Source: RMDB library 15KLIB, as collected in RNAgym. Structure probing data (2A3 and DMS) for a 170-nucleotide construct. For DMS, 11,962 sequencing reads were counted. 2A3 adducts were read by reverse transcription with SuperScript II with manganese. Values cover nucleotides 27 to 129.
[RMDB]
RNA sequence: GGGAACGACUCGAGUAGAGUCGAAAAACAGAUUCGCAUUGCAUGCCGUAAGUGUAAUUUAGCUUUCCGGUUAACCACCUCAAAGCUACGCGCUAAUGAUAAUAUCUUAUCAGUUAGAUUCACUGCUCCGCCCUGGUCUUCGGACCAGGGAAAAGAAACAACAACAACAAC
Reactivity to 2A3 in 0.01 (KOAc 150mM, MgCl2 10mM, bicine 150mM(pH8.5), 24C), signal-to-noise 7, nucleotides 027 to 129: a000c040a000g040a080u130u140c060g010c030a020u010u150g040c020a020u100g020c010c060g050u080a060a040g020u020g030u060a100a130u060u070u060a000g000c000u000u000u010c030c000g010g000u030u070a060a050c030c020a010c000c000u030c040a020a020a000g000c010u000a040c110g050c000g000c050u030a040a000u030g030a000u010a060a060u130a060u140c150u070u000a020u020c020a070g060u030u020a010g000a060u070u050c040a020c060u030g010c000u030c020c010g040
Reactivity to DMS in 0.01 (KOAc 150mM, MgCl2 10mM, bicine 150mM(pH8.5), 24C), signal-to-noise 5, nucleotides 027 to 129: a070c070a090g020a000u020u100c040g000c030a060u010u080g030c050a120u030g070c000c110g040u010a050a040g000u020g030u050a030a090u000u000u000a000g030c040u000u000u000c110c260g030g030u030u000a120a000c290c180a100c020c000u030c300a040a040a020g010c040u020a060c200g040c000g050c020u040a070a010u000g030a050u000a040a020u070a130u040c140u060u000a050u010c020a060g030u040u000a010g030a090u070u030c090a000c060u010g000c110u040c050c100g020